[RMDB]
RNA sequence: GGGAACGACUCGAGUAGAGUCGAAAAAAUGGUACUCUAAUCAGUCCUUAUUAUCCCAGCUUGCUGAGGGGCAGGGAGAGCGCCUCUUCCUCUGGGCAGCGCUAUCUAGAUAGGUAAGUGGGGGCGGGGAAGGGUGCAUAGCUGUUUUAGCUGAGGGAUUACUUACCAAGUUCGCUUGGUAAGUAAUAAAAGAAACAACAACAACAAC
Reactivity to 2A3 in 0.01 (KOAc 150mM, MgCl2 10mM, bicine 150mM(pH8.5), 24C), signal-to-noise 2, nucleotides 027 to 156: a000a020u160g030g030u070a020c020u010c030u140a070a090u130c060a070g000u020c030c050u160u100a080u090u120a080u090c010c000c010a010g040c100u100u200g000c030u050g020a040g000g000g030g010c040a070g040g020g000a100g000a000g040c000g060c020c000u050c000u000u060c000c000u020c050u040g010g000g050c030a040g020c030g000c100u000a030u030c050u020a010g160a300u150a070g050g060u060a110a170g040u250g040g000g000g020g020c070g000g000g010g100a050a070g070g020g000u080g000c030a030u120a010g020c020u030g030u290u090u120u130a030g000c030u020g030a070g000g010g010